[RMDB]
RNA sequence: GGGAACGACUCGAGUAGAGUCGAAAAUCGAUGCAUGCUUGCAUGCAAUUCGAUGUAUACCUUAGUGACCCGCACUACACUGAGAAAGUAGCAAUUUACUAUGCGAAGCUAGUAAAUUAGCGGAUUUCCCUUUUCCGUAUUUCGAUACGGAAAAGGGAAAAGAAACAACAACAACAAC
Reactivity to 2A3 in 0.01 (KOAc 150mM, MgCl2 10mM, bicine 150mM(pH8.5), 24C), signal-to-noise 4, nucleotides 027 to 126: u000c000g000a000u000g000c000a000u000g000c000u070u160g020c020a000u000g000c000a000a060u060u010c000g000a000u010g050u070a140u050a080c000c000u030u060a080g000u030g080a080c000c000c060g040c040a020c030u080a010c020a000c060u130g050a030g090a150a060a020g060u060a020g010c010a000a000u000u000u000a010c010u020a070u290g020c070g050a120a050g000c010u010a000g000u010a000a040a010u020u030a020g000c010g000g050a020u000u000u000
Reactivity to DMS in 0.01 (KOAc 150mM, MgCl2 10mM, bicine 150mM(pH8.5), 24C), signal-to-noise 1, nucleotides 027 to 126: u000c000g000a000u000g010c010a010u000g040c010u030u000g030c000a000u000g000c020a010a050u000u000c060g000a000u000g010u010a080u020a090c050c010u000u090a060g010u010g000a020c030c030c010g010c010a300c050u000a010c060a010c210u000g040a080g000a150a000a170g000u000a100g000c300a020a000u000u000u000a000c000u000a000u010g040c050g000a040a060g000c000u000a000g000u000a000a000a020u000u020a090g050c000g040g010a250u000u000u000
Structure probing data (2A3 and DMS) for a 177-nucleotide construct. 2A3 adducts were read by reverse transcription with SuperScript II with manganese. For DMS, 1,281 sequencing reads were counted. The data come from the RNA Mapping Database (RMDB), libraries RFM100 and RFMREP. The reactions ran in a buffer of 150 mM KOAc, 10 mM MgCl2 and 150 mM bicine (pH 8.5), at 24 C.